[RMDB]
RNA sequence: GGGAACGACUCGAGUAGAGUCGAAAAAGGUCCAUAAAAGCUAGAGGCAAACUUAAUCGCAUAGGACAUGAUGGGAAUGUCUUCAAAGCCAGCCGCAUCAAGCCCCUGACGGAUAGCCGCCACAAAAGUAAUUUUAUGCGUUCGCGCAUAAAAUUACAAAAGAAACAACAACAACAAC
Reactivity to DMS in 0.01 (KOAc 150mM, MgCl2 10mM, bicine 150mM(pH8.5), 24C), signal-to-noise 2, nucleotides 027 to 126: a120g000g000u010c000c020a060u010a120a110a070a100g030c050u000a140g000a060g000g010c020a040a030a170c050u030u000a070a120u020c080g010c130a180u000a070g000g020a080c160a030u070g010a080u000g000g050g010a060a150u000g050u000c000u000u000c060a010a060a090g000c030c050a030g020c070c020g020c050a010u010c100a100a080g000c030c010c010c010u000g000a030c140g020g000a060u000a040g020c000c000g010c030c010a090c120a060a030a010a070
Reactivity to 2A3 in 0.01 (KOAc 150mM, MgCl2 10mM, bicine 150mM(pH8.5), 24C), signal-to-noise 4, nucleotides 027 to 126: a010g070g000u090c060c020a060u150a060a170a010a000g030c050u100a020g010a030g110g010c020a040a100a030c070u050u100a100a040u090c070g000c080a080u130a120g100g000a020c030a030u130g020a070u050g040g000g050a130a000u030g000u030c000u080u070c140a160a050a010g020c020c000a000g020c000c010g040c010a050u030c040a060a050g010c010c000c000c020u050g040a020c030g000g010a010u020a030g050c050c020g000c010c020a060c030a030a120a020a000
Conditions: 150 mM KOAc, 10 mM MgCl2 and 150 mM bicine (pH 8.5), 24 C. This 177-nucleotide RNA was probed chemically with DMS and 2A3. For DMS, 2,367 sequencing reads were counted. It was measured as part of the RMDB library OK1LIB. For DMS the reverse transcriptase was MarathonRT.